[RMDB]
RNA sequence: GGGAACGACUCGAGUAGAGUCGAAAACGCAUGCGAAAGCAUGCGGCUAUGCUAAUGCAUGGCGACCCCGAUCAUGUUGACGUAGGGGCGUAUGUGGUUAUUAUUCCGCAUACGAUUACCAGUGUCUGUUAUUAUUCAGAUACAUGGAAGUCAACGACAUACGGAUUAUGUUCGCAUAAUCCGUAUGAAAAGAAACAACAACAACAAC
Reactivity to 2A3 in 0.01 (KOAc 150mM, MgCl2 10mM, bicine 150mM(pH8.5), 24C), signal-to-noise 9, nucleotides 027 to 156: c010g000c000a000u000g000c010g060a080a010a000g010c000a000u000g000c000g000g000c000u000a000u000g000c010u180a300a080u300g000c000a000u000g000g000c010g080a110c000c000c000c010g010a050u090c070a160u200g000u000u000g000a010c010g000u020a020g000g000g000g000c000g010u000a000u000g020u020g020g060u090u040a160u200u090a120u240u090c000c010g000c000a000u000a000c000g000a010u010u060a030c010c000a000g000u010g000u000c000u000g090u040u050a260u210u090a150u110u110c000a000g010a000u000a000c090a220u020g010g010a050a020g000u000c000a000a000c000g000a000
Reactivity to DMS in 0.01 (KOAc 150mM, MgCl2 10mM, bicine 150mM(pH8.5), 24C), signal-to-noise 5, nucleotides 027 to 156: c020g010c000a010u000g020c000g020a180a140a260g020c010a020u000g010c020g020g020c020u000a010u000g020c000u010a130a190u010g010c010a030u010g020g010c020g010a130c030c000c000c000g010a120u030c040a110u010g030u000u010g020a010c010g010u000a270g020g010g000g010c000g000u000a010u000g030u000g020g020u000u000a150u010u000a300u010u000c000c000g040c000a010u030a010c000g000a130u010u010a070c020c010a060g010u000g010u000c000u000g010u010u000a170u000u000a240u000u000c000a010g000a020u000a000c000a120u010g020g010a080a060g010u000c010a020a020c010g020a290
Overview: An RNA of 207 nucleotides, treated with 2A3 and DMS and read out base by base. For 2A3, 9,969 sequencing reads were counted. For DMS, 16,543 sequencing reads were counted. It was measured as part of the RMDB library OK3TST. For DMS the reverse transcriptase was MarathonRT. The RNA was probed in 150 mM KOAc, 10 mM MgCl2 and 150 mM bicine (pH 8.5) at 24 C.